[RMDB]
RNA sequence: GGGAACGACUCGAGUAGAGUCGAAAAGCGCGUCGAGUCGAUCCGAUCACUGAUCCGCUGAUCGAUCGCGCGUGGAUCUCGGUACUGAGCAUCGCUGCGAUCACGGUACGCAGUCGUCGGCGCGCGCUGUGGUCUUACAGUUCGCUGUAAGACCACAAAAAGAAACAACAACAACAAC
Reactivity to 2A3 in 0.01 (KOAc 150mM, MgCl2 10mM, bicine 150mM(pH8.5), 24C), signal-to-noise 4, nucleotides 027 to 126: g010c000g020c010g000u040c030g040a030g140u140c040g040a060u040c030c030g000a080u090c040a060c140u080g020a050u040c030c040g030c120u060g020a170u080c080g020a030u030c020g010c010g000c020g020u020g060g060a170u060c020u000c000g040g140u240a200c170u220g030a000g030c010a040u080c010g010c050u180g000c000g010a020u020c000a000c050g030g000u090a040c090g000c060a020g010u040c020g050u000c010g000g020c000g000c000g000c000g000c000
Reactivity to DMS in 0.01 (KOAc 150mM, MgCl2 10mM, bicine 150mM(pH8.5), 24C), signal-to-noise 3, nucleotides 027 to 126: g040c010g000c020g010u000c020g020a070g010u030c050g000a100u010c050c010g000a070u000c160a090c080u000g000a050u010c050c130g020c160u000g010a050u000c080g000a010u000c000g000c010g010c030g020u010g000g010a060u010c010u000c000g020g010u020a090c210u020g000a040g000c080a130u000c050g010c020u010g000c020g010a020u000c000a050c030g000g000u000a070c210g010c040a060g000u000c100g020u010c010g000g010c030g010c000g000c010g000c050